[RMDB]
RNA sequence: GGGAACGACUCGAGUAGAGUCGAAAAUAAAAUAAAAGAGGCCACAGCAGUAGCGUUCACGUCGCGGCGUCUGUAAGAUUGUGGUCAAUCUGUGAAUACUGCUAAAAAGAUCGAAAGAUCAAAAAAACUAGAUACACUAGUUCGCUAGUGUAUCUAGAAAAGAAACAACAACAACAAC
Reactivity to DMS in 0.01 (KOAc 150mM, MgCl2 10mM, bicine 150mM(pH8.5), 24C), signal-to-noise 3, nucleotides 027 to 126: u010a090a060a110a170u000a060a030a110a120g010a040g000g040c010c010a100c260a040g020c020a020g000u000a030g010c000g000u000u010c210a100c200g000u000c040g030c030g020g020c010g000u000c010u000g000u000a250a030g000a010u000u000g010u010g020g010u000c020a010a010u000c000u000g000u010g000a060a030u000a010c030u000g010c010u000a050a070a080a110a070g000a010u000c000g000a090a080a140g000a010u000c000a000a000a040a050a080a050a170
Reactivity to 2A3 in 0.01 (KOAc 150mM, MgCl2 10mM, bicine 150mM(pH8.5), 24C), signal-to-noise 1, nucleotides 027 to 126: u040a000a030a010a020u150a000a040a020a000g020a040g010g010c000c000a010c020a000g010c010a010g000u030a000g020c000g010u020u110c120a050c120g150u130c010g020c020g000g000c010g250u000c000u000g050u030a010a020g030a040u030u040g040u120g110g050u090c010a010a010u000c010u000g020u010g020a020a010u020a020c000u010g000c000u050a070a030a040a000a070g010a010u010c010g000a040a050a030g000a040u060c010a030a050a010a050a000a000a000